[RMDB]
RNA sequence: GGGAACGACUCGAGUAGAGUCGAAAACAUUAACCAACCUUAUUUAGCUUUUCUACAUAUCUGCACACAUGCAUUUUUCAAAGCUAUAUUAUUUCUGUGCUCAGGAUCAAUCAUCCAUAGUUUAAACCUUGUAUUAGGACUUCGGUCCUAAUACAAGAAAAGAAACAACAACAACAAC
Reactivity to 2A3 in 0.01 (KOAc 150mM, MgCl2 10mM, bicine 150mM(pH8.5), 24C), signal-to-noise 3, nucleotides 027 to 126: c010a050u140u140a030a030c020c010a020a070c030c020u100u120a090u100u080u000a030g020c010u040u050u120u100c070u090a120c040a090u240a020u070c040u030g000c000a040c000a000c010a160u090g010c000a010u010u000u000u050u140c040a030a020a050g000c020u020a030u020a030u190u070a080u030u100u030c050u070g110u050g010c020u020c050a050g050g000a000u040c070a060a070u090c010a100u000c030c030a050u040a060g060u070u080u160a050a070a050c010
Reactivity to DMS in 0.01 (KOAc 150mM, MgCl2 10mM, bicine 150mM(pH8.5), 24C), signal-to-noise 3, nucleotides 027 to 126: c120a110u010u000a100a230c050c020a100a100c080c090u010u010a050u000u000u000a050g010c020u000u000u000u000c080u010a070c160a050u010a040u000c080u000g050c030a080c140a080c260a080u010g040c040a030u020u010u000u000u010c120a060a040a040g000c030u010a030u000a080u000u000a100u010u010u010c060u010g000u000g030c050u010c140a100g000g000a070u010c080a050a140u000c100a100u010c010c040a120u010a070g000u000u020u000a070a110a100c150
This 177-nucleotide RNA was probed chemically with 2A3 and DMS. The DMS profile rests on 1,484 reads. The reactions ran in a buffer of 150 mM KOAc, 10 mM MgCl2 and 150 mM bicine (pH 8.5), at 24 C. Source: RMDB library OK2TRN, as collected in RNAgym. For 2A3, 2,509 sequencing reads were counted.